[RMDB]
RNA sequence: GGGAACGACUCGAGUAGAGUCGAAAACUAUUUCUACUGCCUCUUCUUGUGAUUGAGUAGUAAAUAGCUCUACUCCUAAGUAAGAAUAUCCCAAUCGACCUGAAGCAUUUAUCCUAGGACCUAUUGCCAUAAAUGCCACGUUCGCGUGGCAUUUAUGAAAAGAAACAACAACAACAAC
Reactivity to DMS in 0.01 (KOAc 150mM, MgCl2 10mM, bicine 150mM(pH8.5), 24C), signal-to-noise 2, nucleotides 027 to 126: c030u000a020u040u010u010c020u010a040c020u010g010c090c030u000c020u000u030c080u010u030g000u020g010a150u050u000g010a050g020u000a000g010u000a040a040a040u010a050g010c080u020c020u030a070c040u010c010c130u010a120a130g000u010a060a130g000a080a090u060a120u010c000c000c000a010a100u010c090g000a020c040c030u000g000a100a010g070c040a030u000u000u000a040u000c050c000u000a030g000g000a150c070c040u000a060u040u010g000c150
Reactivity to 2A3 in 0.01 (KOAc 150mM, MgCl2 10mM, bicine 150mM(pH8.5), 24C), signal-to-noise 7, nucleotides 027 to 126: c010u010a030u030u040u000c030u010a030c010u080g140c030c030u090c020u150u080c060u180u300g170u160g080a150u220u060g040a010g020u020a010g020u060a010a040a040u050a010g010c010u000c000u020a010c000u010c010c020u060a080a040g030u020a070a050g050a150a110u080a120u130c000c000c000a000a050u090c040g050a060c010c020u030g020a030a010g020c040a040u010u060u080a070u070c020c060u050a040g020g070a080c020c030u070a100u090u180g020c020
Source information
This 177-nucleotide RNA was probed chemically with DMS and 2A3. For 2A3 the reverse transcriptase was SuperScript II with manganese. The DMS profile rests on 3,304 reads.